Notes: Chemical mapping of a 207-nucleotide RNA with DMS and 2A3. Conditions: 150 mM KOAc, 10 mM MgCl2 and 150 mM bicine (pH 8.5), 24 C. For 2A3, 3,640 sequencing reads were counted. It was measured as part of the RMDB library OK3TST.
[RMDB]
RNA sequence: GGGAACGACUCGAGUAGAGUCGAAAAACACGCACACCAAGUCUCAAUUGCUGGCAGGCUGCACCCGCCACUCCAGGUCUGGUCACGUUCAGACCCGUGUCUGUAUUCGAACCCAAAAUUGGAGCCGAAUUGAUGAGACUAAUUUCUAGAGAGGGAGUCUUUUCAACUAAUUCGUUAGUUGAAAAGAAAAAGAAACAACAACAACAAC
Reactivity to DMS in 0.01 (KOAc 150mM, MgCl2 10mM, bicine 150mM(pH8.5), 24C), signal-to-noise 3, nucleotides 027 to 156: a070c050a080c100g010c050a050c080a090c040c040a080a080g000u010c010u000c030a080a110u010u010g040c060u000g020g020c050a070g000g000c020u010g000c050a300c020c020c030g010c040c040a060c020u000c010c020a060g010g000u010c000u000g020g020u000c110a200c160g000u010u000c030a060g020a040c000c030c110g020u000g030u000c010u010g000u000a090u000u010c040g000a060a210c170c030c000a030a050a090a140u010u010g030g000a060g020c060c000g000a070a080u000u010g010a110u010g010a120g020a060c010u020a080a090u010u010u000c040u010a110g000a190g010a100g000g040g010a150g020
Reactivity to 2A3 in 0.01 (KOAc 150mM, MgCl2 10mM, bicine 150mM(pH8.5), 24C), signal-to-noise 5, nucleotides 027 to 156: a000c080a020c040g040c010a060c010a020c070c050a060a020g030u000c010u010c030a100a240u120u130g030c050u040g030g020c020a040g060g000c040u090g010c040a070c010c020c010g000c030c020a010c010u020c020c030a030g000g030u020c030u030g020g010u060c070a020c140g050u080u050c010a010g010a020c000c040c050g090u100g010u070c030u040g050u050a120u050u070c020g020a050a050c010c000c000a040a170a070a100u130u110g010g000a000g030c040c030g070a020a020u080u080g030a070u090g020a030g010a010c020u020a020a080u040u140u060c050u070a020g040a010g020a070g100g010g040a020g050